[RMDB]
RNA sequence: GGGAACGACUCGAGUAGAGUCGAAAAGGCGUACGUGGUCCUGGUGGACCAGACGGGAAACAUGGCGACCCGGCUGCGGGCCGCGGUCCCCGGCUGGAGCCGCCGCACCCUGCUCCCCGAGACCGCGAGCUGCAAACAAUUUCGAUUGUUUGCAGCUAAAAGAAACAACAACAACAAC
Reactivity to DMS in 0.01 (KOAc 150mM, MgCl2 10mM, bicine 150mM(pH8.5), 24C), signal-to-noise 2, nucleotides 027 to 126: g020g020c120g010u030a080c070g040u000g020g050u000c000c010u000g010g010u020g000g000a040c060c030a020g010a050c120g020g020g000a240a170a090c170a120u030g040g010c010g000a090c010c000c020g000g000c020u010g000c260g010g000g000c040c030g030c120g010g000u010c000c000c050c020g000g000c050u000g020g020a070g000c010c070g000c010c000g000c130a080c100c010c000u000g000c260u020c010c000c010c080g020a010g000a060c010c000g000c010g000
Reactivity to 2A3 in 0.01 (KOAc 150mM, MgCl2 10mM, bicine 150mM(pH8.5), 24C), signal-to-noise 2, nucleotides 027 to 126: g060g040c070g010u090a020c000g050u090g010g000u010c000c010u080g010g050u200g030g020a030c020c020a020g020a010c040g000g030g000a040a180a020c080a130u220g090g000c040g000a030c000c010c000g020g000c050u120g020c130g030g010g000c030c020g040c040g020g040u070c000c010c020c000g010g000c010u010g010g020a080g060c010c000g000c020c010g000c010a080c000c010c020u030g020c020u030c010c000c000c010g020a040g010a030c000c000g000c000g020
This 177-nucleotide RNA was probed chemically with DMS and 2A3. The RNA was probed in 150 mM KOAc, 10 mM MgCl2 and 150 mM bicine (pH 8.5) at 24 C. For DMS the reverse transcriptase was MarathonRT. Source: RMDB library OK1LIB, as collected in RNAgym.